[RMDB]
RNA sequence: GGGAACGACUCGAGUAGAGUCGAAAAGCAACUGCGAAAAUCCGCUGCUGGGGAAGAAUGCCGACCACAGGCACAGUGGAUGUUGAUGAACUUUUUAAAGUCUUGGCAGGAAUCUGUGGUGAGGAAACCCAUUACGGUGAUUCGUCACCGUAAUGGGAAAAGAAACAACAACAACAAC
Reactivity to 2A3 in 0.01 (KOAc 150mM, MgCl2 10mM, bicine 150mM(pH8.5), 24C), signal-to-noise 2, nucleotides 027 to 126: g020c050a010a120c020u090g040c010g060a110a020a000a170u020c020c010g000c030u000g000c010u050g030g040g000g060a070a000g040a150a070u150g020c040c000g030a040c010c040a000c010a030g040g000c060a000c000a010g050u010g000g010a030u010g040u100u130g010a060u090g010a050a120c010u110u120u030u080u300a220a170a000g020u040c030u110u080g030g010c000a030g090g020a040a040u040c000u050g000u020g030g000u040g040a120g010g070a090a030a050
Reactivity to DMS in 0.01 (KOAc 150mM, MgCl2 10mM, bicine 150mM(pH8.5), 24C), signal-to-noise 3, nucleotides 027 to 126: g020c040a060a220c030u010g000c050g000a090a130a140a110u010c020c020g020c010u000g000c090u000g010g000g010g010a170a110g010a150a090u000g010c040c010g000a140c050c020a040c030a050g010g000c050a080c030a040g010u000g000g000a050u000g010u000u020g010a050u000g010a090a050c050u000u000u000u020u010a060a100a110g000u000c020u000u000g000g000c010a010g000g000a100a070u010c030u000g000u000g000g020u000g000a090g010g010a090a120a180